An RNA of 177 nucleotides, treated with DMS and read out base by base. For DMS the reverse transcriptase was MarathonRT. For DMS, 3,092 sequencing reads were counted. The data come from the RNA Mapping Database (RMDB), library M2PK90. Values cover nucleotides 27 to 126.
RNA sequence: GGGAACGACUCGAGUAGAGUCGAAAAUUAAAGCGGUCUCUGAGGUAGGAGAGAGAGAGAGAGAGAGCUUACCGCUUUUCAUAGUGGCUCUCUGUCUGACUCUUAAGCUCGAGUCGUUCCCUAAAAAAGUAGACAUGUUAUUCGUAACAUGUCUACUAAAAGAAACAACAACAACAAC
Reactivity to DMS in 0.01 (KOAc 150mM, MgCl2 10mM, bicine 150mM(pH8.5), 24C), signal-to-noise 3, nucleotides 027 to 126: u000u010a040a050a060g030c020g010g010u000c010u000c010u000g020a120g020g010u000a130g000g010a040g000a050g000a070g020a100g010a110g000a070g000a070g000a040g010a020g010c050u010u010a090c050c020g020c020u010u010u000u010c170a100u010a090g010u000g000g000c010u000c010u000c000u000g000u000c030u010g000a060c000u010c000u000u000a070a110g010c010u000c000g010a010g010u000c000g000u000u000c000c000c000u010a000a020a020a060a020